[RMDB]
An RNA of 170 nucleotides, treated with DMS and 2A3 and read out base by base. The data come from the RNA Mapping Database (RMDB), library 15KLIB. Reactivities are rounded to 0.1 and cut off at 0 and 3.

RNA sequence: GGGAACGACUCGAGUAGAGUCGAAAAGGUUAUGUUCUUGCUACCAUUAUUGUGUUUCUGUGUGCUGUACUGAUGUAUUUGUGUUUACCUACAUUUUCUAUGGCACCUGUUGAAUUUUAUGAAGACCCUGCGUCCUCCUUCGGGAGGACGAAAAGAAACAACAACAACAAC
Reactivity to DMS in 0.01 (KOAc 150mM, MgCl2 10mM, bicine 150mM(pH8.5), 24C), signal-to-noise 3, nucleotides 027 to 129: g010g040u020u030a140u020g030u010u010c070u060u020g020c050u010a070c040c010a000u020u030a200u030u030g030u000g060u000u010u010c000u030g000u050g000u020g080c040u030g040u030a030c110u020g030a050u010g020u000a060u020u070u030g000u060g020u010u020u030a000c050c100u020a000c140a120u020u010u030u010c080u000a090u030g000g000c070a000c070c020u020g010u020u030g010a060a110u020u030u030u150a060u040g010a060a060g020a140c050c020c030u040g000
Reactivity to 2A3 in 0.01 (KOAc 150mM, MgCl2 10mM, bicine 150mM(pH8.5), 24C), signal-to-noise 4, nucleotides 027 to 129: g070g010u080u060a110u160g000u000u010c030u060u170g000c000u020a030c000c040a070u060u150a130u090u190g040u040g020u100u020u000c050u000g080u000g000u020g130c010u000g030u020a030c000u000g000a000u000g020u090a090u050u050u060g100u000g060u000u080u040a020c000c000u010a020c000a090u050u020u030u050c010u040a110u060g010g020c040a050c040c000u020g040u060u090g010a020a060u000u050u110u140a130u140g010a040a000g070a070c010c000c010u010g020

Notes
The reactions ran in a buffer of 150 mM KOAc, 10 mM MgCl2 and 150 mM bicine (pH 8.5), at 24 C.